[RMDB]
RNA sequence: GGGAACGACUCGAGUAGAGUCGAAAACGCAUCCUAAUACUACGCAAACGCGGGCGAAGACACACAGCCUAGAGAAGAACGAGAACAGAAUGAGAACAGUGUGGAGUACGAUCGUUAAUGGAUGCGAAAAUAAUAAAAUAUUCGUAUUUUAUUAUUUAAAAGAAACAACAACAACAAC
Reactivity to 2A3 in 0.01 (KOAc 150mM, MgCl2 10mM, bicine 150mM(pH8.5), 24C), signal-to-noise 5, nucleotides 027 to 126: c010g020c010a000u000c000c000u020a040a020u100a110c070u050a040c040g030c070a090a150a050c060g010c030g020g010g000c020g090a090a010g120a040c040a010c010a010c010a090g030c000c010u060a050g030a010g020a220a020g030a090a020c110g060a040g050a230a010c050a040g140a100a120u170g010a060g010a110a010c040a090g030u010g000u030g090g010a050g040u090a040c070g030a160u100c030g020u000u030a030a050u170g000g000a000u000g000c000g000a010
Reactivity to DMS in 0.01 (KOAc 150mM, MgCl2 10mM, bicine 150mM(pH8.5), 24C), signal-to-noise 7, nucleotides 027 to 126: c020g010c000a020u000c000c010u000a070a100u040a050c080u020a140c040g000c080a080a090a120c180g000c050g000g000g010c030g020a140a100g010a120c060a030c050a040c060a200g010c030c010u000a040g010a110g010a110a070g010a080a060c070g000a100g000a090a090c080a050g010a080a080u040g010a100g000a090a120c110a060g010u010g010u000g010g010a120g010u020a060c140g000a070u020c070g010u000u010a050a090u030g000g000a020u000g000c000g000a050
Conditions: 150 mM KOAc, 10 mM MgCl2 and 150 mM bicine (pH 8.5), 24 C. This 177-nucleotide RNA was probed chemically with 2A3 and DMS. DMS adducts were read by reverse transcription with MarathonRT.